An RNA of 177 nucleotides, treated with 2A3 and DMS and read out base by base. Values cover nucleotides 27 to 126. The 2A3 profile rests on 1,679 reads. It was measured as part of the RMDB library OK2TST.

RNA sequence: GGGAACGACUCGAGUAGAGUCGAAAAACCGGCGCUUGUGCCGCCCGGCAUGGAAUGGCAAUCGAUCAGCACGGCAUAGCCGAAUUGCUGCCGGGUCGCCUCCAGCAACGCAUCGAGUGCCGCAUGACACUGCAGUAGUCUUCGGACUACUGCAGUGAAAAGAAACAACAACAACAAC
Reactivity to 2A3 in 0.01 (KOAc 150mM, MgCl2 10mM, bicine 150mM(pH8.5), 24C), signal-to-noise 2, nucleotides 027 to 126: a000c020c000g010g000c000g010c020u040u010g030u010g090c030c020g010c020c050c010g080g020c050a170u060g030g090a150a200u170g040g000c000a030a020u050c040g040a090u120c020a020g020c020a020c050g000g000c090a200u300a090g010c000c010g010a090a020u120u100g010c000u000g000c020c000g070g020g000u000c050g000c020c040u000c000c010a020g010c030a020a050c020g000c000a010u160c060g000a000g020u020g000c000c000g000c020a030u120g010a010
Reactivity to DMS in 0.01 (KOAc 150mM, MgCl2 10mM, bicine 150mM(pH8.5), 24C), signal-to-noise 2, nucleotides 027 to 126: a090c170c000g010g000c030g030c040u000u010g010u000g010c050c160g050c070c080c140g010g000c020a110u010g000g010a070a060u000g020g010c010a050a080u000c050g000a110u000c010a020g030c020a150c020g000g000c050a190u000a170g030c000c000g040a170a120u000u010g020c000u000g000c230c010g000g000g000u010c140g020c010c000u000c020c010a030g010c020a090a100c180g030c030a050u000c030g010a030g060u050g000c030c010g010c120a090u000g010a260